About this RNA
Structure probing data (2A3 and DMS) for a 177-nucleotide construct. For 2A3, 16,213 sequencing reads were counted. It was measured as part of the RMDB library M2PK50. For DMS the reverse transcriptase was MarathonRT.
RNA sequence: GGGAACGACUCGAGUAGAGUCGAAAAUGACGUCGUUUCGACGACGUCAACAUAAAAUCAGCGGUAAAUAAUUAGGAGGCCUUACCGCUGAACGCCUCCAUACGAGAGGGCUAUUCGUAGCCCUCAACCUACAUACAGACUUCGGUCUGUAUGUAGGAAAAGAAACAACAACAACAAC
Reactivity to 2A3 in 0.01 (KOAc 150mM, MgCl2 10mM, bicine 150mM(pH8.5), 24C), signal-to-noise 8, nucleotides 027 to 126: u050g000a000c000g010u010c010g000u010u050u100c220g080a030c000g010a000c000g010u000c000a000a010c010a020u190a020a130a010a100u040c010a000g010c000g020g020u040a060a110a110u150a110a220u240u200a160g050g010a010g000g030c000c020u010u030a010c000c010g000c000u000g000a000a000c020g020c010c000u030c020c010a050u100a140c150g030a090g000a000g180g000g000c000u010a010u030u070c200g070u010a000g000c000c000c010u000c000a010a010
Reactivity to DMS in 0.01 (KOAc 150mM, MgCl2 10mM, bicine 150mM(pH8.5), 24C), signal-to-noise 5, nucleotides 027 to 126: u000g010a010c000g010u010c000g020u000u000u000c160g010a020c000g010a000c020g020u000c000a020a050c150a090u000a090a070a090a130u000c010a010g010c000g000g000u010a010a030a150u010a060a110u000u020a100g000g000a050g020g010c140c130u000u000a020c000c000g010c000u000g000a000a040c190g000c020c010u000c030c040a210u030a090c230g000a130g010a010g010g000g010c000u000a010u000u010c150g010u000a010g000c000c000c000u000c000a020a060